[RMDB]
RNA sequence: GGGAACGACUCGAGUAGAGUCGAAAAGAUAUGGAACUCCGAAGAACACGAUUCCGAAGAACUAUUCUGGAUCCUCGGAAACGAGGAUCCAGAAUAGGGAGGAAAUGUGGGAGGAGUUCCUAAGUCACGAUAGAGGGUGGUUCGCCACCCUCUAUCGAAAAGAAACAACAACAACAAC
Reactivity to DMS in 0.01 (KOAc 150mM, MgCl2 10mM, bicine 150mM(pH8.5), 24C), signal-to-noise 1, nucleotides 027 to 126: g000a040u010a300u000g000g000a030a010c000u000c000c000g030a270a200g070a230a260c000a010c010g000a200u000u010c020c030g010a150a130g000a230a260c000u000a000u000u000c000u000g000g000a000u000c000c010u010c020g000g010a150a110a080c020g000a000g040g010a030u000c020c000a000g010a020a000u000a000g000g010g000a050g010g000a010a060a070u030g010u000g040g000g010a190g000g000a040g000u000u000c000c000u000a000a090g000u000c090a300